Chemical mapping of a 207-nucleotide RNA with 2A3 and DMS. It was measured as part of the RMDB library OK3TST. For DMS the reverse transcriptase was MarathonRT. For 2A3, 19,115 sequencing reads were counted.
[RMDB]
RNA sequence: GGGAACGACUCGAGUAGAGUCGAAAAUGGGGGAGAAACAAAUCACAAUGGUGGAAUGUCAUCAUCUAAGGCAAUUUUCACUUCUUUUGUGGAUCUUCAGUUGCUUCAGGCCAUCUGGAUAUAUACGUGCAGGUCACAGGAGAUAUGGUGGCAUAGCGAUACAUAACGUAUUCGUACGUUAUGUAUCAAAAGAAACAACAACAACAAC
Reactivity to 2A3 in 0.01 (KOAc 150mM, MgCl2 10mM, bicine 150mM(pH8.5), 24C), signal-to-noise 9, nucleotides 027 to 156: u120g010g010g010g020g010a040g040a020a080a020c070a020a070a050u130c040a030c040a080a090u100g040g000u030g010g020a050a020u030g020u020c010a070u030c020a030u050c120u180a100a100g040g000c040a080a120u040u030u070u120c040a020c000u070u080c030u050u130u040u030g010u030g070g040a050u020c030u070u060c050a040g010u030u030g010c010u030u050c040a040g020g060c060c020a090u060c030u030g030g010a020u030a010u010a010u010a130c090g040u050g020c040a030g010g070u080c020a020c010a040g050g060a050g010a020u070a040u130g020g010u000g010g000c020a020u080a030g080c080
Reactivity to DMS in 0.01 (KOAc 150mM, MgCl2 10mM, bicine 150mM(pH8.5), 24C), signal-to-noise 5, nucleotides 027 to 156: u010g000g000g020g030g010a080g020a240a130a090c040a070a070a070u010c030a050c080a080a090u000g030g130u000g030g030a070a070u000g000u010c000a080u000c090a080u000c140u000a050a080g000g010c050a050a080u000u000u010u000c030a050c020u000u000c020u010u000u000u000g020u000g010g010a160u000c020u020u000c040a070g020u000u000g000c060u000u000c060a070g020g020c040c060a040u010c020u010g000g010a080u000a070u010a110u000a050c060g030u000g030c030a090g020g020u000c020a070c030a070g000g000a130g010a100u000a060u000g030g030u000g010g020c030a060u000a080g010c190